The record gives the reactivity of an RNA of 177 nucleotides to DMS. Source: RMDB library OK2TRN, as collected in RNAgym. Conditions: 150 mM KOAc, 10 mM MgCl2 and 150 mM bicine (pH 8.5), 24 C. Values cover nucleotides 27 to 126.

RNA sequence: GGGAACGACUCGAGUAGAGUCGAAAAUUUCGCAAAGAAGAGGAAAGAAGAGAUCCUCCCGAUUCUCCGAAAAAGAGUGAGGGCAACUGAGAACGCUUUCGAUCGAGGAAUGAUGAAUGACUACGAGAAGGUUCAAGGUAUUCGUACCUUGAACCUUAAAAGAAACAACAACAACAAC
Reactivity to DMS in 0.01 (KOAc 150mM, MgCl2 10mM, bicine 150mM(pH8.5), 24C), signal-to-noise 2, nucleotides 027 to 126: u000u000u010c070g030c070a070a070a130g010a080a050g030a090g020g000a060a090a060g010a120a090g000a060g030a090u010c070c040u010c010c010c010g010a110u010u000c020u000c030c060g010a070a040a110a120a050g000a040g020u010g000a120g000g000g040c120a080a050c040u020g010a090g000a120a080c100g020c080u000u010u000c060g010a120u000c020g000a050g000g000a060a000u020g020a060u000g010a100a040u020g000a060c060u010a070c090g030a080g010